RNA sequence: GGGAACGACUCGAGUAGAGUCGAAAAGGUGCGGCACUGGCAAUGGAGAAUAAGCAACGUCUGGCGCUGUUGUUUUCGUUGGCGAAACCGAUCAAAGAGCGUACCCCGGCAGUGAGCCCGCUGUAUAGAUACAGGCGGAAUUCGUUCCGCCUGUAUCAAAAGAAACAACAACAACAAC
Reactivity to DMS in 0.01 (KOAc 150mM, MgCl2 10mM, bicine 150mM(pH8.5), 24C), signal-to-noise 2, nucleotides 027 to 126: g020g030u000g020c000g000g000c020a050c080u000g010g010c060a090a140u000g000g000a090g010a080a090u010a060a090g000c050a050a070c070g050u000c080u000g010g020c090g000c060u000g020u010u010g000u000u000u030u010c080g040u000u000g010g040c040g000a030a090a120c070c050g010a070u000c070a090a170a080g000a070g020c010g010u010a070c060c020c020c070g020g020c010a000g010u000g010a080g010c040c010c030g030c030u000g000u010a130u010a080

Conditions: 150 mM KOAc, 10 mM MgCl2 and 150 mM bicine (pH 8.5), 24 C. The record gives the reactivity of an RNA of 177 nucleotides to DMS. It was measured as part of the RMDB library OK2TRN. DMS adducts were read by reverse transcription with MarathonRT.